This 177-nucleotide RNA was probed chemically with 2A3 and DMS. DMS (dimethyl sulfate) methylates the pairing face of unpaired adenines and cytosines. For 2A3 the reverse transcriptase was SuperScript II with manganese. It was measured as part of the RMDB library OK2TRN.
[RMDB]
RNA sequence: GGGAACGACUCGAGUAGAGUCGAAAAGGCACGGUCUUCUCCAGCUCUAGGCCCACGACGAGCGCGACACGGUACGCGCCUGAUCGCAGGUCGGCCAUCGCCGCGAGCGUCGCCACGCUGCCGGAUGGCGCUCUGCAAGUUUCGACUUGCAGAGCGCAAAAGAAACAACAACAACAAC
Reactivity to 2A3 in 0.01 (KOAc 150mM, MgCl2 10mM, bicine 150mM(pH8.5), 24C), signal-to-noise 1, nucleotides 027 to 126: g030g010c050a010c020g000g080u040c010u070u000c020u000c000c000a030g030c020u030c030u070a080g070g000c020c020c010a010c040g010a010c010g000a010g000c000g000c020g040a010c040a030c150g020g080u300a180c000g020c020g080c000c010u070g010a200u210c150g050c150a030g000g030u020c020g000g000c000c000a040u070c120g050c040c000g030c030g020a020g050c000g030u030c020g040c010c000a040c020g030c050u030g000c010c000g040g020a070u080g100
Reactivity to DMS in 0.01 (KOAc 150mM, MgCl2 10mM, bicine 150mM(pH8.5), 24C), signal-to-noise 2, nucleotides 027 to 126: g000g060c010a080c030g030g010u010c050u010u000c040u010c040c040a120g000c030u020c060u010a140g000g010c000c000c130a210c030g000a000c070g000a060g000c030g030c030g000a110c050a060c100g010g030u000a080c020g020c080g010c010c050u010g000a210u000c120g030c080a080g010g010u000c030g010g000c000c040a060u000c110g000c000c010g060c050g030a050g010c010g000u000c010g010c080c050a090c040g010c060u010g020c050c010g020g000a130u020g010
Annotation:
Conditions: 150 mM KOAc, 10 mM MgCl2 and 150 mM bicine (pH 8.5), 24 C. As a SHAPE reagent, 2A3 marks flexible, mostly unpaired nucleotides at the ribose 2'-OH. For DMS, 1,274 sequencing reads were counted.